Structure probing data (2A3 and DMS) for a 177-nucleotide construct.
RNA sequence: GGGAACGACUCGAGUAGAGUCGAAAACGCGCUGUGUCGCGGCGGCCGAGGACCAGUAUGAGCCGGGCUCGUCGAGGCGGUGGGCCGAGCGGUUCGCCACGCUAUUACGCAACCUGGAAUUCCUGCCCGACUCAAGCAAUUUCGAUUGCUUGAGUCGAAAAGAAACAACAACAACAAC
Reactivity to 2A3 in 0.01 (KOAc 150mM, MgCl2 10mM, bicine 150mM(pH8.5), 24C), signal-to-noise 2, nucleotides 027 to 126: c040g030c020g060c060u080g010u040g010u180c000g020c030g040g000c030g010g030c060c050g040a080g000g000a090c000c010a060g000u140a160u190g070a040g020c000c000g000g040g040c030u010c060g090u010c060g060a090g060g120c010g000g060u100g010g010g000c030c020g020a130g090c100g010g000u080u090c020g010c010c000a050c040g020c020u080a120u250u120a050c080g000c010a020a040c010c010u010g050g030a060a070u030u040c000c000u010g020c020c010
Reactivity to DMS in 0.01 (KOAc 150mM, MgCl2 10mM, bicine 150mM(pH8.5), 24C), signal-to-noise 2, nucleotides 027 to 126: c130g030c060g030c050u000g010u000g010u000c040g000c060g050g020c040g010g020c040c030g020a120g000g010a160c000c020a100g000u000a090u000g010a080g000c030c010g000g000g010c030u020c020g030u000c070g030a090g010g020c030g000g000u000g000g010g000c030c040g020a100g020c090g010g020u000u000c040g000c070c050a080c070g000c030u000a090u010u010a070c070g000c050a100a070c080c010u000g010g010a080a220u000u000c000c000u010g010c160c080

Source: RMDB library OK2TRN, as collected in RNAgym. For 2A3, 2,559 sequencing reads were counted.